[RMDB]
RNA sequence: GGGAACGACUCGAGUAGAGUCGAAAAGAUAUGGAGCGAUGAUACGAGCUCCGGAUCGGAAACGAUCCGAAGAGCGAUGAGUAUAUCGCUCCUAAGUCAAACCUCGCUCCCUUCGGGGAGCGAGGAACGUAAUAAAAGGCUUCGGCCUUUUAUUACGAAAAGAAACAACAACAACAAC
Reactivity to 2A3 in 0.01 (KOAc 150mM, MgCl2 10mM, bicine 150mM(pH8.5), 24C), signal-to-noise 1, nucleotides 027 to 126: g000a000u030a000u070g000g000a000g000c000g000a010u160g090a010u010a030c030g050a100g020c010u010c020c000g000g010a010u000c000g000g020a040a000a000c000g000a000u020c060c010g040a300a070g010a010g010c030g080a250u280g070a100g000u000a000u000a000u010c000g010c000u010c000c000u000a000a000g000u000c000a010a040a070c000c000u000c010g000c010u000c050c020c000u030u050c300g120g000g000g000a000g020c010g000a000g000g000a000a010
Reactivity to DMS in 0.01 (KOAc 150mM, MgCl2 10mM, bicine 150mM(pH8.5), 24C), signal-to-noise 2, nucleotides 027 to 126: g000a020u000a010u010g000g010a020g010c000g010a000u010g010a030u000a010c020g000a020g020c000u010c000c000g000g000a000u000c000g020g000a000a010a010c000g010a020u000c000c000g010a140a130g020a000g020c000g020a190u000g010a090g000u000a010u000a010u000c010g010c000u000c000c000u000a010a060g000u000c000a130a150a230c000c010u000c000g000c000u000c000c010c000u000u000c240g030g000g000g000a010g010c010g020a000g010g000a010a010
The record gives the reactivity of an RNA of 177 nucleotides to 2A3 and DMS. The DMS profile rests on 3,976 reads. The RNA was probed in 150 mM KOAc, 10 mM MgCl2 and 150 mM bicine (pH 8.5) at 24 C. In probing experiments dimethyl sulfate is read out at A N1 and C N3, which are open when not base-paired.